An RNA of 177 nucleotides, treated with DMS and 2A3 and read out base by base. DMS adducts were read by reverse transcription with MarathonRT. The RNA was probed in 150 mM KOAc, 10 mM MgCl2 and 150 mM bicine (pH 8.5) at 24 C. For 2A3 the reverse transcriptase was SuperScript II with manganese. The DMS profile rests on 1,891 reads.
[RMDB]
RNA sequence: GGGAACGACUCGAGUAGAGUCGAAAAGAUAUGGAACGGUUCAAGCGGGAGAGGAAGGUUCGGAAACGAACCGACCUCAUCGAUCGCUUGAGACCGUUCCUAAGUCAAAGCGAUGUUCGCAUCGCAAGUCUACUACGCAGUUCGCUGCGUAGUAGACAAAAGAAACAACAACAACAAC
Reactivity to DMS in 0.01 (KOAc 150mM, MgCl2 10mM, bicine 150mM(pH8.5), 24C), signal-to-noise 2, nucleotides 027 to 126: g000a040u000a300u000g030g000a010a000c020g000g000u000u010c000a050a030g000c010g010g000g010a060g010a040g000g020a020a300g000g010u020u000c000g050g010a130a080a290c010g000a040a000c010c000g000a280c000c000u000c000a100u000c210g010a090u000c000g000c000u030u010g000a050g020a030c000c000g000u000u000c000c000u000a030a050g010u000c050a030a170a140g010c000g010a020u000g000u000u000c240g030c000a010u000c000g010c000a080a100
Reactivity to 2A3 in 0.01 (KOAc 150mM, MgCl2 10mM, bicine 150mM(pH8.5), 24C), signal-to-noise 2, nucleotides 027 to 126: g020a000u080a050u160g010g000a010a020c010g010g020u020u010c010a000a000g010c000g010g040g000a060g000a020g030g000a000a050g000g010u000u000c010g000g070a120a050a040c040g000a000a010c030c000g020a010c000c000u000c000a020u080c010g040a040u040c000g010c010u010u050g010a020g010a000c000c000g000u010u000c010c010u000a000a010g000u030c040a060a110a000g030c000g000a000u000g010u090u300c300g020c130a000u000c010g020c000a020a020